This 177-nucleotide RNA was probed chemically with DMS and 2A3. Reactivities are given for positions 27 through 126. The reactions ran in a buffer of 150 mM KOAc, 10 mM MgCl2 and 150 mM bicine (pH 8.5), at 24 C. It was measured as part of the RMDB library VIROID. For 2A3 the reverse transcriptase was SuperScript II with manganese.
RNA sequence: GGGAACGACUCGAGUAGAGUCGAAAAUGACCAAGAGAAGGGAAGAAACGGAAGCCUUUCCCCUUGACGCCGGUGAAACUCUGGAAUAGGAAGAAGGAAGGUGGAAAGAAAGGAGGGACCCUCCCGAUCGAUAAUUAGGGUUCGCCCUAAUUAUCGAAAAAGAAACAACAACAACAAC
Reactivity to DMS in 0.01 (KOAc 150mM, MgCl2 10mM, bicine 150mM(pH8.5), 24C), signal-to-noise 2, nucleotides 027 to 126: u010g010a120c050c020a110a070g000a060g000a080a070g000g010g000a080a030g000a050a070a060c110g010g000a090a140g020c040c030u000u000u000c020c010c040c060u010u000g010a190c180g010c020c020g000g020u000g010a050a090a140c100u000c020u000g020g020a050a100u010a060g020g010a060a040g010a090a070g000g000a090a040g000g020u000g030g020a060a030a080g000a040a070a060g010g000a070g000g030g010a110c030c030c040u000c010c000c010g010a140
Reactivity to 2A3 in 0.01 (KOAc 150mM, MgCl2 10mM, bicine 150mM(pH8.5), 24C), signal-to-noise 1, nucleotides 027 to 126: u090g030a030c010c030a000a000g060a040g040a070a020g000g000g000a000a100g030a040a210a050c080g060g020a050a020g000c000c010u040u060u010c000c000c000c040u000u050g040a030c000g020c090c000g000g000u080g020a140a040a030c080u090c020u130g060g040a030a050u050a100g110g020a050a070g010a040a010g060g000a010a040g040g060u090g000g040a080a040a000g030a040a090a000g030g000a020g000g020g030a080c000c000c010u000c020c000c000g020a060